About this RNA: Conditions: 150 mM KOAc, 10 mM MgCl2 and 150 mM bicine (pH 8.5), 24 C. This 207-nucleotide RNA was probed chemically with 2A3 and DMS. DMS adducts were read by reverse transcription with MarathonRT. For DMS, 5,149 sequencing reads were counted.
RNA sequence: GGGAACGACUCGAGUAGAGUCGAAAACUGCCAAAAUCGAUGCUGCUAAAAAGAAGAAAGAGUAAGACAUGUCAACUGAGGUAGACAACUACCUUGAGCACUACGGUGUUAAGGGUAUGAAGUGGGGUAAACGUCAAAAGCAUACUGAGAAGCGACGUCAGUCAUCAUAGUUCGCUAUGAUGACUGAAAAAGAAACAACAACAACAAC
Reactivity to 2A3 in 0.01 (KOAc 150mM, MgCl2 10mM, bicine 150mM(pH8.5), 24C), signal-to-noise 4, nucleotides 027 to 156: c030u070g020c030c010a060a070a000a110u090c040g040a030u080g010c010u020g010c020u090a090a040a040a040a000g110a040a000g040a030a100a010g060a020g040u080a090a010g040a030c030a050u080g040u060c050a040a020c090u070g010a000g000g020u020a010g010a050c040a050a120c040u010a010c000c000u010u020g020a010g000c010a010c020u070a020c120g030g000u030g000u060u030a030a020g040g000g000u050a050u100g030a100a030g050u050g020g000g000g020u030a060a070a010c020g030u020c030a020a020a000a100g000c010a030u080a170c040u060g040a030g020a140a010g050c020g030a020c050g020
Reactivity to DMS in 0.01 (KOAc 150mM, MgCl2 10mM, bicine 150mM(pH8.5), 24C), signal-to-noise 3, nucleotides 027 to 156: c050u000g020c020c020a050a050a070a140u000c050g020a080u000g040c010u000g000c030u010a030a090a060a060a090g000a080a100g010a100a050a070g010a150g000u010a090a110g010a070c030a050u000g000u000c030a110a120c060u000g000a020g030g030u010a080g010a140c220a090a130c030u010a030c000c020u010u000g010a080g010c000a030c050u000a060c150g040g020u000g020u000u020a050a060g020g010g000u000a050u010g010a050a070g030u000g020g010g010g010u000a020a040a060c050g000u000c030a030a040a050a050g000c050a070u000a210c100u000g000a070g000a080a060g000c060g030a060c050g000